[RMDB]
RNA sequence: GGGAACGACUCGAGUAGAGUCGAAAAAAUGGGCUGGUAUGAUUUAUGAAGGAUGCGAGAGCGAAACUGGGAAGUUCGAAGACUCGUGAAUGGCUUUUACGGCUCCACGAGUUCGAAACUAUCACCAAUACCAACAUCGGUUCGCCGAUGUUGGUAUAAAAGAAACAACAACAACAAC
Reactivity to 2A3 in 0.01 (KOAc 150mM, MgCl2 10mM, bicine 150mM(pH8.5), 24C), signal-to-noise 2, nucleotides 027 to 126: a000a000u200g030g000g000c030u050g000g050u160a060u120g130a250u030u120u040a140u050g110a050a010g010g060a040u010g050c040g040a040g000a040g030c070g030a060a120a000c020u010g060g000g060a000a000g000u000u040c000g000a030a000g070a110c000u050c000g000u050g010a090a140u250g030g000c060u060u100u050u300a070c120g000g000c000u000c010c000a000c000g010a020g000u000u030c030g000a030a000a000c030u030a180u080c020a000c090c000a060
Reactivity to DMS in 0.01 (KOAc 150mM, MgCl2 10mM, bicine 150mM(pH8.5), 24C), signal-to-noise 2, nucleotides 027 to 126: a120a020u000g030g000g000c010u000g000g030u000a030u030g000a090u020u010u020a040u080g020a070a080g010g000a040u000g010c080g010a220g020a040g040c040g020a040a130a050c120u000g000g000g000a140a100g010u000u000c040g000a110a070g000a050c000u020c000g050u000g000a070a040u120g000g040c040u010u010u040u030a160c170g000g000c030u000c080c000a030c000g000a000g070u030u000c000g000a030a040a050c020u000a050u040c080a090c060c010a050